[RMDB]
RNA sequence: GGGAACGACUCGAGUAGAGUCGAAAAUACCAGGGAAUGCCCGGCAUUCGCGCGCCCCCGAGGGCGUAGACGACUUUGGCGGUUGAAGCGUCGCCCACCGGAGAGGGGGACGGAGGUGGCCCAGGAGCGAAUAAACGUCUUUCGAGACGUUUAUUCGAAAAGAAACAACAACAACAAC
Reactivity to 2A3 in 0.01 (KOAc 150mM, MgCl2 10mM, bicine 150mM(pH8.5), 24C), signal-to-noise 1, nucleotides 027 to 126: u130a020c010c010a030g080g040g020a090a100u050g020c170c130c060g030g020c070a050u030u040c030g020c010g020c010g010c120c000c020c020c020g030a230g000g030g060c030g000u040a100g090a060c040g090a160c080u000u020u090g040g090c080g010g050u060u130g040a060a000g040c020g010u000c000g000c030c010c000a050c030c040g080g030a070g040a060g070g000g000g000g000a010c020g040g020a000g090g030u050g000g040c050c000c010a070g040g040a070g070
Reactivity to DMS in 0.01 (KOAc 150mM, MgCl2 10mM, bicine 150mM(pH8.5), 24C), signal-to-noise 2, nucleotides 027 to 126: u010a110c040c020a150g010g010g010a120a090u000g020c070c090c080g000g000c020a090u020u000c050g010c090g010c060g010c010c000c000c070c100g000a190g010g000g020c070g020u010a070g010a110c010g020a110c100u000u000u000g020g000c020g030g020u000u010g000a030a040g000c010g010u010c010g000c030c010c020a120c100c060g010g010a150g010a200g010g000g000g000g020a060c040g000g030a110g010g020u000g010g020c010c020c060a100g000g010a130g000